[RMDB]
RNA sequence: GGGAACGACUCGAGUAGAGUCGAAAAUGUUAUUGGAGCUAGCCGCAUCGCACGCUUACCUCCUCCGGUCAUUCUACACAGAUUCUAAGUGGAAAAGCGAUUCCAGAUCCAUGCAGCCAGCUGGACCAGCCCGUAUAUCCUUCGGGAUAUACGGGCUAAAAGAAACAACAACAACAAC
Reactivity to DMS in 0.01 (KOAc 150mM, MgCl2 10mM, bicine 150mM(pH8.5), 24C), signal-to-noise 1, nucleotides 027 to 126: u000g000u000u100a080u020u000g030g030a120g030c030u050a090g050c060c050g010c050a080u030c120g000c030a060c000g030c020u000u000a230c100c000u020c060c000u040c100c050g000g010u040c000a050u010u000c080u000a060c050a000c240a110g000a140u050u010c070u020a070a090g000u160g000g000a050a040a070a230g000c120g000a010u000u000c080c030a030g000a030u030c050c020a040u000g030c060a140g010c020c020a160g040c000u020g000g000a070c160c060
Reactivity to 2A3 in 0.01 (KOAc 150mM, MgCl2 10mM, bicine 150mM(pH8.5), 24C), signal-to-noise 2, nucleotides 027 to 126: u080g000u070u030a220u080u150g000g010a020g030c050u080a000g050c000c010g000c030a030u040c030g050c020a090c030g060c030u010u000a050c010c010u020c010c000u000c010c010g040g020u040c000a010u000u040c000u090a080c110a000c010a100g010a050u140u000c070u160a180a120g030u060g020g070a140a160a000a000g080c000g000a010u080u050c000c030a000g080a160u000c000c000a030u130g040c010a000g010c040c000a010g040c000u030g020g060a020c010c000